RNA sequence: GGGAACGACUCGAGUAGAGUCGAAAACACUAGCUUCCGAAUCUGUACCUGAGAGUCAAAGCUCACGAUUUGACAGCAUACGAAGCUAGAAAAUGCUGCGACUCAGGGAUACCUAUCAGAGCUAUAAGAUGUUGUUUAAUUUCGAUUGGACAACAUCAAAAGAAACAACAACAACAAC
Reactivity to 2A3 in 0.01 (KOAc 150mM, MgCl2 10mM, bicine 150mM(pH8.5), 24C), signal-to-noise 9, nucleotides 027 to 126: c040a010c020u010a000g000c000u110u030c030c020g020a040a060u010c020u030g010u020a030c000c000u030g010a030g000a000g090u010c010a030a000a000g010c010u020c020a090c050g070a030u020u000u030g040a010c000a000g000c000a020u060a070c070g080a060a010g000c000u000a000g000a000a010a000a000u070g000c000u010g000c020g010a000c000u000c000a000g000g000g010a020u040a040c000c010u010a020u040c010a010g000a000g020c010u010a020u020a110a030
Reactivity to DMS in 0.01 (KOAc 150mM, MgCl2 10mM, bicine 150mM(pH8.5), 24C), signal-to-noise 9, nucleotides 027 to 126: c050a150c090u000a010g000c010u000u010c020c090g010a120a090u010c040u010g000u010a080c030c010u000g000a080g010a100g000u000c050a050a200a050g010c020u010c140a140c290g000a100u000u010u000g010a190c050a030g000c090a050u020a170c300g000a050a040g010c010u000a030g000a050a030a060a050u010g000c010u000g010c300g000a090c010u000c010a280g000g000g000a090u010a030c060c060u000a070u010c040a050g000a030g000c040u010a040u020a080a120
Source information:
An RNA of 177 nucleotides, treated with 2A3 and DMS and read out base by base. The 2A3 profile rests on 65,048 reads. For DMS the reverse transcriptase was MarathonRT. The reactions ran in a buffer of 150 mM KOAc, 10 mM MgCl2 and 150 mM bicine (pH 8.5), at 24 C. 2A3 adducts were read by reverse transcription with SuperScript II with manganese. The data come from the RNA Mapping Database (RMDB), library OK1LIB.